[RMDB]
RNA sequence: GGGAACGACUCGAGUAGAGUCGAAAAGAUAUGGAUGUACGAGGGAGUCCCUGAUCGGAAACGAUCAGAGGACGACGAUCUCGACAUCCUAAGUCAAAACUGGGGUAAGGUUCGCCUUACCCCAGAACUAGAAUGAGAUCUUCGGAUCUCAUUCUAGAAAAGAAACAACAACAACAAC
Reactivity to DMS in 0.01 (KOAc 150mM, MgCl2 10mM, bicine 150mM(pH8.5), 24C), signal-to-noise 2, nucleotides 027 to 126: g010a010u000a010u010g010g000a030u000g010u000a130c000g010a030g020g010g010a010g030u010c000c010c000u000g030a000u000c000g020g010a000a000a010c010g000a010u000c010a010g010a050g030g030a000c000g000a050c300g010a020u010c000u000c010g000a020c000a010u000c000c000u000a000a080g010u010c010a110a090a100a210c020u000g000g000g010g000u000a000a000g000g000u000u020c280g010c000c000u000u000a000c000c000c010c010a000g000a020a070
Reactivity to 2A3 in 0.01 (KOAc 150mM, MgCl2 10mM, bicine 150mM(pH8.5), 24C), signal-to-noise 1, nucleotides 027 to 126: g000a000u000a000u030g000g000a000u000g000u080a300c000g000a020g000g000g030a030g000u000c010c000c000u020g010a010u000c000g000g000a000a000a000c000g000a010u010c010a010g020a030g010g010a000c000g000a020c000g000a000u010c000u010c000g000a000c000a000u010c000c000u000a000a000g000u010c010a030a050a010a150c010u000g010g010g000g000u010a010a000g030g060u040u190c300g200c070c000u000u000a000c010c010c000c000a000g000a000a000
Description: Source: RMDB library TTRDES, as collected in RNAgym. An RNA of 177 nucleotides, treated with DMS and 2A3 and read out base by base. The reactions ran in a buffer of 150 mM KOAc, 10 mM MgCl2 and 150 mM bicine (pH 8.5), at 24 C. For DMS the reverse transcriptase was MarathonRT. As a SHAPE reagent, 2A3 marks flexible, mostly unpaired nucleotides at the ribose 2'-OH. 2A3 adducts were read by reverse transcription with SuperScript II with manganese.